An RNA of 207 nucleotides, treated with 2A3 and DMS and read out base by base. For 2A3 the reverse transcriptase was SuperScript II with manganese. The RNA was probed in 150 mM KOAc, 10 mM MgCl2 and 150 mM bicine (pH 8.5) at 24 C. Source: RMDB library OK3TST, as collected in RNAgym. The DMS profile rests on 5,161 reads.
[RMDB]
RNA sequence: GGGAACGACUCGAGUAGAGUCGAAAAGGAAAUCAAGUAUACUACGAAGUCUUGAAGAGCCGUAUCUUCGCGCACGGUCACGCUAGCGUGGGAGAGGAUGAAAAAGGUUUCGCGUUCGCUGCGCGUCGCCGAGAGAACAUCGAUGAAGAAUUUGGGGCAUCAUACAUCACUUCGGUGAUGUAUGAUGAAAAGAAACAACAACAACAAC
Reactivity to 2A3 in 0.01 (KOAc 150mM, MgCl2 10mM, bicine 150mM(pH8.5), 24C), signal-to-noise 5, nucleotides 027 to 156: g060g000a040a050a040u080c040a050a020g030u060a090u040a200c110u040a060c080g090a040a050g040u040c010u090u080g030a080a040g030a010g080c030c020g080u130a070u040c040u060u090c040g010c000g000c020a040c050g000g100u100c030a020c120g030c040u080a070g020c010g030u060g030g030g000a060g000a010g030g020a030u080g110a050a040a010a000a040g040g000u010u050u060c020g000c010g030u100u060c060g020c150u140g000c020g000c010g030u040c030g000c010c020g060a060g000a010g000a070a020c020a040u060c050g080a080u090g050a050a040g040a070a080u110u060u150g010g000g000g000
Reactivity to DMS in 0.01 (KOAc 150mM, MgCl2 10mM, bicine 150mM(pH8.5), 24C), signal-to-noise 3, nucleotides 027 to 156: g030g030a050a070a130u000c030a040a070g020u000a100u000a110c050u010a080c050g010a080a040g000u000c030u010u050g020a060a090g000a060g020c020c080g000u000a150u010c020u000u000c020g020c040g060c030a040c020g000g010u010c070a050c090g020c050u000a080g030c030g080u000g010g010g000a120g010a110g030g030a040u000g000a030a070a090a130a100g020g010u000u010u000c020g010c020g030u000u000c140g050c120u000g010c000g020c030g030u000c060g010c030c000g010a130g010a100g000a060a050c020a040u000c030g000a120u000g000a070a110g010a040a100u000u010u000g020g020g030g010